Chemical mapping of a 177-nucleotide RNA with 2A3 and DMS.
RNA sequence: GGGAACGACUCGAGUAGAGUCGAAAAUGUCUUCUCUCUUUUGAACCUUAAGCUUAGAGCACCUAUGGGUGUCUAUGACUUUAAGGUCUCAACACAAGAGUUCAGAUUCAUGACUGCUAACAAUCUACAUGUCUGAUACCUUCGGGUAUCAGACAUGAAAAGAAACAACAACAACAAC
Reactivity to 2A3 in 0.01 (KOAc 150mM, MgCl2 10mM, bicine 150mM(pH8.5), 24C), signal-to-noise 1, nucleotides 027 to 126: u070g030u020c000u210u110c090u020c000u000c010u000u050u030u030g050a000a020c010c010u000u000a010a010g000c000u030u010a010g030a040g140c010a010c000c000u130a240u300g200g020g000u000g000u000c020u010a010u010g120a180c010u080u110u030a020a000g020g010u010c010u020c000a020a000c070a010c030a020a040g010a020g000u030u060c000a010g010a000u010u130c020a050u070g080a020c070u060g090c040u110a120a030c020a120a060u030c020u090a030
Reactivity to DMS in 0.01 (KOAc 150mM, MgCl2 10mM, bicine 150mM(pH8.5), 24C), signal-to-noise 1, nucleotides 027 to 126: u000g000u000c050u010u000c060u000c030u000c050u050u000u000u000g010a050a040c000c000u000u000a000a010g000c000u000u000a000g000a220g050c020a000c000c000u000a150u020g070g010g020u000g040u010c000u000a000u010g000a210c010u020u000u000a000a020g050g000u000c180u000c050a000a050c300a120c150a100a030g000a080g000u040u000c100a100g030a050u000u000c100a040u000g000a120c050u000g000c100u000a050a090c190a070a120u000c040u000a170

2A3 adducts were read by reverse transcription with SuperScript II with manganese.
It was measured as part of the RMDB library 15KREP.
Reactivities are given for positions 27 through 126.